[RMDB]
RNA sequence: GGGAACGACUCGAGUAGAGUCGAAAACUGUGACACAGUGUGAGAGACACAGUCACAGACACACACUCACACUGUCAGACACUGUGACAGAGACAGACACAGACUCUCACAGAGACUGUCAGACUCACCCUUUGGGUACUUUCGAGUACCCAAAGGGAAAAGAAACAACAACAACAAC
Reactivity to DMS in 0.01 (KOAc 150mM, MgCl2 10mM, bicine 150mM(pH8.5), 24C), signal-to-noise 2, nucleotides 027 to 126: c020u010g010u000g000a160c060a140c140a020g050u000g030u020g010a070g010a060g010a130c050a010c140a030g000u000c000a090c160a110g000a070c100a090c130a070c210a150c000u000c020a000c070a080c000u000g000u000c010a120g000a120c110a070c020u000g040u010g000a110c140a080g000a130g000a060c020a010g000a140c110a130c160a050g000a090c050u000c040u000c050a050c070a110g000a040g000a050c080u000g010u010c000a050g020a090c130u000c090a190
Reactivity to 2A3 in 0.01 (KOAc 150mM, MgCl2 10mM, bicine 150mM(pH8.5), 24C), signal-to-noise 2, nucleotides 027 to 126: c010u020g020u030g010a000c020a020c060a200g040u050g000u030g050a130g020a030g090a070c010a000c010a060g010u010c030a020c010a100g080a030c040a000c000a020c000a020c030u030c020a040c000a020c050u010g030u040c010a010g050a040c020a000c140u030g000u010g040a080c040a090g030a000g050a050c020a020g030a050c030a010c000a260g090a140c020u000c000u010c000a050c010a040g040a010g040a040c030u010g000u060c000a010g020a080c000u040c030a110
Source: RMDB library OK2TRN, as collected in RNAgym. Chemical mapping of a 177-nucleotide RNA with DMS and 2A3. Reactivities are given for positions 27 through 126. For 2A3, 2,029 sequencing reads were counted. For 2A3 the reverse transcriptase was SuperScript II with manganese.